[RMDB]
RNA sequence: GGGAACGACUCGAGUAGAGUCGAAAAAUGUGAUUUCUCCUGCACCUUUAUCAAUGGAGGAACUCGACUUUGCUGUGGGUCCCAAAGGGACCUUAGGUGCAGACAGUUACCGGCGGUGAAGUGUGAGCAUAGGUUCGUGUCUUCGGACACGAACCAACUACGUACCUUAGUUCGCUAAGGUACGUAGAAAAGAAACAACAACAACAAC
Reactivity to DMS in 0.01 (KOAc 150mM, MgCl2 10mM, bicine 150mM(pH8.5), 24C), signal-to-noise 2, nucleotides 027 to 156: a140u000g010u000g000a110u000u000u000c000u000c000c020u010g010c040a090c060c020u000u000u000a060u000c050a080a190u010g000g020a060g050g000a020a050c050u010c030g000a110c050u000u020u000g010c030u020g000u010g030g010g020u000c000c000c000a050a090a250g030g020g020a000c010c020u000u000a050g030g050u000g000c040a140g020a140c090a030g030u000u000a060c000c000g060g010c190g010g000u000g000a070a030g020u010g000u020g020a080g020c040a140u010a150g060g020u000u000c000g150u000g000u000c010u000u000c300g090g010a040c000a000c000g000a000a000c010c000a030a050
Reactivity to 2A3 in 0.01 (KOAc 150mM, MgCl2 10mM, bicine 150mM(pH8.5), 24C), signal-to-noise 4, nucleotides 027 to 156: a000u160g060u070g060a140u020u040u020c010u010c010c020u020g000c020a070c020c020u100u140u210a190u230c070a110a060u140g040g010a020g050g070a040a020c030u030c050g040a050c050u040u030u060g020c010u020g010u090g040g000g000u010c000c000c020a150a110a050g000g000g010a020c000c000u010u100a050g000g000u010g010c000a010g060a110c020a000g020u030u060a040c000c000g010g000c010g000g000u020g000a040a030g040u080g050u050g130a040g060c070a130u100a180g000g000u000u000c000g000u000g010u000c010u030u050c240g080g000a010c010a000c010g000a000a000c000c000a000a000